Structure probing data (DMS and 2A3) for a 177-nucleotide construct. 2A3 adducts were read by reverse transcription with SuperScript II with manganese. Reactivities are given for positions 27 through 126. Source: RMDB libraries RFM100 and RFMREP, as collected in RNAgym.

RNA sequence: GGGAACGACUCGAGUAGAGUCGAAAAGGCUAAUUGGCUAAGGGUUCAAGGGCUUGCGGACCAAAACUGGUAUCAUUGCAAGGUUCGAAACUUAAUAAAUACCCUAGCGCUUAAAGACACUCACCUCAUAGAGGAUUAACUUCGGUUAAUCCUCUAUAAAAGAAACAACAACAACAAC
Reactivity to DMS in 0.01 (KOAc 150mM, MgCl2 10mM, bicine 150mM(pH8.5), 24C), signal-to-noise 5, nucleotides 027 to 126: g000g020c030u000a040a130u000u010g000g000c010u010a100a100g000g000g010u000u000c190a100a160g000g000g000c060u020u020g020c010g030g000a020c000c010a020a070a100a090c200u020g000g010u010a050u030c100a110u010u020g010c030a040a110g000g000u020u010c030g000a130a080a080c090u010u010a060a130u010a050a080a050u010a070c010c000c000u000a040g020c090g010c040u000u010a050a070a060g010a100c120a080c050u000c100a080c070c020u010c170
Reactivity to 2A3 in 0.01 (KOAc 150mM, MgCl2 10mM, bicine 150mM(pH8.5), 24C), signal-to-noise 5, nucleotides 027 to 126: g040g000c030u050a080a060u180u070g030g010c000u010a120a250g050g010g010u030u090c070a060a090g010g030g020c010u040u020g010c000g010g010a010c000c000a060a130a060a130c170u040g000g010u080a070u190c040a170u070u220g020c030a020a040g040g020u070u030c030g050a080a070a030c050u070u100a070a030u070a150a190a060u180a050c000c000c000u000a020g010c080g020c040u050u120a070a060a040g020a010c030a020c100u010c020a120c020c010u040c010